Overview: Chemical mapping of a 177-nucleotide RNA with 2A3 and DMS. The DMS profile rests on 2,858 reads.
RNA sequence: GGGAACGACUCGAGUAGAGUCGAAAACACAAGUUGGGUUCCAUGUCUAGAGAAUAUCAGUGCAGGAAAUUUGAUCAAGCAUGCUGACCAGAGCCUCUUGUCCGCAUCAGCUGACAGCUACAACAGAAACCUCUAGUCAUUUCGAUGACUAGAGGUUAAAAGAAACAACAACAACAAC
Reactivity to 2A3 in 0.01 (KOAc 150mM, MgCl2 10mM, bicine 150mM(pH8.5), 24C), signal-to-noise 2, nucleotides 027 to 126: c070a020c040a030a060g060u110u040g070g000g000u070u030c030c000a060u100g000u070c040u050a070g010a000g050a220a080u130a090u220c060a030g050u020g070c030a030g050g130a050a110a140u190u190u150g070a140u070c010a040a000g020c020a040u020g000c000u020g020a060c030c010a010g010a010g150c000c000u030c020u070u010g020u030c010c020g020c030a090u080c050a030g000c000u000g030a020c000a030g020c030u090a080c010a060a010c000a040g130a110
Reactivity to DMS in 0.01 (KOAc 150mM, MgCl2 10mM, bicine 150mM(pH8.5), 24C), signal-to-noise 4, nucleotides 027 to 126: c070a090c120a090a090g000u000u010g000g010g000u000u010c070c030a070u010g000u000c040u000a120g010a120g010a080a080u020a080u000c060a080g030u010g000c030a090g000g000a050a090a060u010u010u010g010a130u000c030a040a120g000c050a040u000g020c080u010g000a030c060c060a070g000a100g010c110c070u000c030u000u000g010u000c020c060g010c040a070u000c140a050g020c020u000g000a040c050a060g000c080u010a050c110a030a040c120a120g010a070